Chemical mapping of a 177-nucleotide RNA with 2A3 and DMS.
For 2A3, 4,470 sequencing reads were counted.
RNA sequence: GGGAACGACUCGAGUAGAGUCGAAAAGAUAUGGAGGGAGCUCGAUAAGCGUGGAUCGGAAACGAUCCAACGCUUUUGACGAGCGAACUCCUAAGUCAAAAGGACAAGAACUUCGGUUCUUGUCCAAGUUUAAAUGCAGGUUCGCCUGCAUUUAAACAAAAGAAACAACAACAACAAC
Reactivity to 2A3 in 0.01 (KOAc 150mM, MgCl2 10mM, bicine 150mM(pH8.5), 24C), signal-to-noise 1, nucleotides 027 to 126: g000a000u040a020u110g020g000a010g010g030g020a040g000c000u020c010g060a100u030a220a020g000c020g000u010g000g000a000u000c010g000g040a020a060a020c010g000a020u000c000c000a020a040c020g000c010u010u020u060u070g040a010c000g010a010g000c010g000a000a000c000u000c010c000u000a050a000g030u010c020a020a020a070a240g000g010a000c010a000a000g000a010a000c020u080u150c280g120g000u000u020c000u000u000g010u000c000c000a000a000
Reactivity to DMS in 0.01 (KOAc 150mM, MgCl2 10mM, bicine 150mM(pH8.5), 24C), signal-to-noise 4, nucleotides 027 to 126: g010a050u000a300u020g000g000a020g010g000g000a300g020c000u000c000g000a130u000a020a030g020c000g030u000g000g000a000u010c000g000g010a070a120a190c000g000a000u000c000c000a000a050c020g000c000u000u000u010u010g010a200c120g010a000g000c000g000a300a180c010u010c000c000u000a020a080g000u010c040a030a090a130a150g000g000a010c000a000a010g010a000a010c000u000u020c260g030g000u000u000c000u000u000g000u000c000c000a010a010
The RNA was probed in 150 mM KOAc, 10 mM MgCl2 and 150 mM bicine (pH 8.5) at 24 C. Reactivities are given for positions 27 through 126.